[RMDB]
RNA sequence: GGGAACGACUCGAGUAGAGUCGAAAACCCUCACUCUUCGGAGUGAGGGAAAUCUGAUUCCCAAUAGCUGGGAAUCCGGGCUAAGACGGAUAGGCGUUGCCAAAAGAUCUGGCUUCGGCCAGAUCAACAAUAACCACCACUUCGGUGGUGGUUAUUGAAAAGAAACAACAACAACAAC
Reactivity to 2A3 in 0.01 (KOAc 150mM, MgCl2 10mM, bicine 150mM(pH8.5), 24C), signal-to-noise 2, nucleotides 027 to 126: c000c000c000u010c000a000c000u020c010u040u100c280g120g000a000g000u000g010a000g000g000g020a030a050a030u050c040u030g010a020u000u020c000c000c000a020a100u220a080g060c080u040g000g000g000a000a020u010c020c090g000g000g040c030u090a120a060g060a020c020g040g020a070u070a060g060g010c020g050u020u050g170c000c000a040a050a030a080g020a000u000c010u000g010g020c010u050u050c280g070g000c010c000a000g000a000u010c000a000a000
Reactivity to DMS in 0.01 (KOAc 150mM, MgCl2 10mM, bicine 150mM(pH8.5), 24C), signal-to-noise 3, nucleotides 027 to 126: c000c000c000u000c000a010c010u000c000u000u010c200g030g010a020g000u010g010a020g000g010g000a000a010a010u010c050u000g000a080u000u000c000c000c000a060a230u000a080g010c230u000g000g020g000a040a010u000c010c130g010g000g040c070u000a090a120g010a020c030g000g020a190u010a040g020g000c010g000u000u010g000c020c010a080a120a150a100g000a000u000c000u000g000g010c000u010u000c220g030g030c000c000a000g000a000u000c000a060a080